[RMDB]
RNA sequence: GGGAACGACUCGAGUAGAGUCGAAAAUUUAGAUGCGGCAAAUUGAAUGUGCACUAUUCGAGCCACAGCGAGGGUAAGGGUCGAUGCACCUAAGUGCUGCUGGAACAGCACGCUUUUGGGGAUCGCAUGUACUGGGCAACUUCGGUUGCCCAGUACAAAAAGAAACAACAACAACAAC
Reactivity to DMS in 0.01 (KOAc 150mM, MgCl2 10mM, bicine 150mM(pH8.5), 24C), signal-to-noise 2, nucleotides 027 to 126: u000u010u030a100g030a090u020g000c000g000g040c000a030a010a090u020u020g020a110a200u020g000u000g010c000a110c040u000a030u010u030c070g000a260g030c060c000a060c200a200g040c110g030a050g030g000g000u000a030a100g000g050g000u030c040g010a100u030g070c030a060c010c020u000a040a070g050u010g010c090u040g000c000u030g030g000a070a170c140a050g000c000a000c040g000c120u000u000u050u000g000g010g000g010a130u040c050g000c080a100
Reactivity to 2A3 in 0.01 (KOAc 150mM, MgCl2 10mM, bicine 150mM(pH8.5), 24C), signal-to-noise 1, nucleotides 027 to 126: u100u120u110a060g000a030u000g060c000g000g000c000a000a000a120u150u110g030a000a010u030g000u000g030c040a010c110u040a190u190u040c090g050a080g000c000c000a050c050a020g210c010g180a190g000g000g000u010a000a030g000g010g010u050c000g000a050u000g030c000a000c000c060u110a120a030g000u000g100c090u000g000c000u000g040g040a220a030c010a040g000c020a000c000g040c000u080u070u050u200g060g030g000g090a100u150c010g000c000a000
The record gives the reactivity of an RNA of 177 nucleotides to DMS and 2A3.
The reactions ran in a buffer of 150 mM KOAc, 10 mM MgCl2 and 150 mM bicine (pH 8.5), at 24 C.
For DMS the reverse transcriptase was MarathonRT.
It was measured as part of the RMDB library OK1LIB.
For 2A3 the reverse transcriptase was SuperScript II with manganese.